[RMDB]
RNA sequence: GGGAACGACUCGAGUAGAGUCGAAAACUCUCCUUUCAGCCAGCGGGCUGUCUUCCCAGGUGUAGAUCACCUAUUCUAACUUCACCUGUUUUGAUACCCUGAUGAGGAAAGUCCCAGGACUUGUCAGCCCACUCAUUAGCUUCGGCUAAUGAGUGGGAAAAGAAACAACAACAACAAC
Reactivity to 2A3 in 0.01 (KOAc 150mM, MgCl2 10mM, bicine 150mM(pH8.5), 24C), signal-to-noise 2, nucleotides 027 to 126: c010u010c010u000c000c010u000u090u130c030a040g000c040c000a060g060c070g090g010g000c050u040g020u000c010u020u010c050c010c000a000g060g040u030g000u010a130g040a190u150c070a090c040c020u020a120u060u120c030u140a070a170c020u030u040c020a020c010c020u050g040u060u030u030u040g070a030u060a060c030c000c010u060g010a050u050g020a020g010g080a080a070a000g010u020c010c010c000a000g010g000a020c000u060u050g000u040c010a020g040